The data come from the RNA Mapping Database (RMDB), library TTRDES. This 177-nucleotide RNA was probed chemically with 2A3 and DMS.

[RMDB]
RNA sequence: GGGAACGACUCGAGUAGAGUCGAAAAGAUAUGGACGUCGCCAGGGAGCUGUGGAUCGGAAACGAUCCAUACAGCAUCGAUCUGGGACGUCCUAAGUCAAAGUUCCAGGUGUUCGCACCUGGAACAAUCCUAUGAUAGCCUUCGGGCUAUCAUAGGAAAAAGAAACAACAACAACAAC
Reactivity to 2A3 in 0.01 (KOAc 150mM, MgCl2 10mM, bicine 150mM(pH8.5), 24C), signal-to-noise 1, nucleotides 027 to 126: g010a010u000a000u080g020g000a000c000g000u000c040g090c150c000a010g010g040g010a030g000c000u000g000u020g030g010a000u000c010g000g000a010a010a000c010g000a000u020c010c000a030u180a050c010a010g000c010a070u300c030g000a010u010c010u020g000g000g020a010c000g000u030c000c000u010a000a000g000u000c020a180a040a010g000u010u000c010c010a000g030g020u020g020u030u080c230g080c210a000c010c000u020g000g000a000a000c000a000a000
Reactivity to DMS in 0.01 (KOAc 150mM, MgCl2 10mM, bicine 150mM(pH8.5), 24C), signal-to-noise 2, nucleotides 027 to 126: g010a010u000a030u020g000g000a020c010g030u000c020g020c010c020a020g010g000g010a020g040c010u010g020u000g000g000a010u000c010g040g000a000a000a020c020g020a010u000c000c010a050u030a040c150a030g000c000a300u000c190g000a010u020c000u000g000g010g020a020c000g000u000c000c000u000a000a060g010u000c000a130a080a170g020u000u000c000c000a030g000g030u000g010u010u020c250g010c010a010c010c000u000g000g000a000a010c010a050a060